An RNA of 207 nucleotides, treated with 2A3 and read out base by base. The reactions ran in a buffer of 150 mM KOAc, 10 mM MgCl2 and 150 mM bicine (pH 8.5), at 24 C. Reactivities are given for positions 27 through 156. The data come from the RNA Mapping Database (RMDB), library RNAMAK. The 2A3 profile rests on 1,308 reads.
[RMDB]
RNA sequence: GGGAACGACUCGAGUAGAGUCGAAAAUCAUCUUCGGAUGACGACGCGCGUACUACCUUGGGAGUCCAUAGAUUGGGAGAUGCUCCCAAAUAGGAGCAUCAUCGAUCAAUUUAUAGGACAUCGAUCAAGGUAUCGCUCUCCAGGUAUUCGUACCUAAGUGUACGAUCACAUUCGUGUGAUCGUACACAAAAGAAACAACAACAACAAC
Reactivity to 2A3 in 0.01 (KOAc 150mM, MgCl2 10mM, bicine 150mM(pH8.5), 24C), signal-to-noise 2, nucleotides 027 to 156: u060c030a020u050c020u020u020c180g140g000a000u000g000a000c020g080a040c030g050c000g000c010g040u100a180c010u000a010c030c000u000u010g050g070g000a030g020u000c000c000a000u000a000g000a000u000u000g060g000g000a060g000a010u000g000c000u000c000c030c030a120a030a050u220a060g010g000a000g020c000a000u020c040a140u260c030g020a010u030c030a000a000u000u070u000a020u090a220g000g000a010c000a100u040c060g110a120u070c010a000a000g000g000u000a000u070c000g000c000u000c050u020c040c000a050g040g030u100a100u040u150c130g060u080a000c040c040u130a270a180